Source: RMDB library OK1LIB, as collected in RNAgym.
An RNA of 177 nucleotides, treated with 2A3 and DMS and read out base by base.
The DMS profile rests on 8,110 reads.
Values cover nucleotides 27 to 126.
Conditions: 150 mM KOAc, 10 mM MgCl2 and 150 mM bicine (pH 8.5), 24 C.
For 2A3, 6,550 sequencing reads were counted.

[RMDB]
RNA sequence: GGGAACGACUCGAGUAGAGUCGAAAAGAAGUGCGGCCUAAACCGGGCACAAGGACGUUCAUCAGGCCACUACCGGUGAUGUUCGUCCGAUUACACUUGACGGGUCCAUGCUGACGUCUUGUGGAGAGGGAAGCAGCACGUUCGCGUGUUGCUUCCCAAAAGAAACAACAACAACAAC
Reactivity to 2A3 in 0.01 (KOAc 150mM, MgCl2 10mM, bicine 150mM(pH8.5), 24C), signal-to-noise 5, nucleotides 027 to 126: g150a050a000g050u090g080c090g010g040c010c020u030a050a020a030c030c020g030g040g020c040a010c020a060a050g000g000a000c000g000u000u000c000a000u000c000a010g220g010c020c070a090c040u140a100c080c110g010g100u060g010a000u010g010u010u010c000g000u000c000c000g000a000u000u110a020c020a010c000u010u040g010a010c010g040g040g100u050c050c030a040u150g000c050u100g100a040c000g020u020c000u020u020g020u020g010g050a090g040a050
Reactivity to DMS in 0.01 (KOAc 150mM, MgCl2 10mM, bicine 150mM(pH8.5), 24C), signal-to-noise 4, nucleotides 027 to 126: g000a090a060g020u040g020c090g000g010c040c000u020a020a130a160c120c060g010g000g000c020a040c120a100a100g000g010a000c000g030u000u000c000a010u000c000a120g000g020c050c060a070c130u030a150c100c040g000g030u030g000a030u000g010u010u010c000g020u000c000c000g020a040u040u030a110c030a040c080u000u000g000a060c020g010g010g000u000c010c060a060u020g010c050u030g000a060c020g000u010c030u010u000g010u000g000g000a100g000a240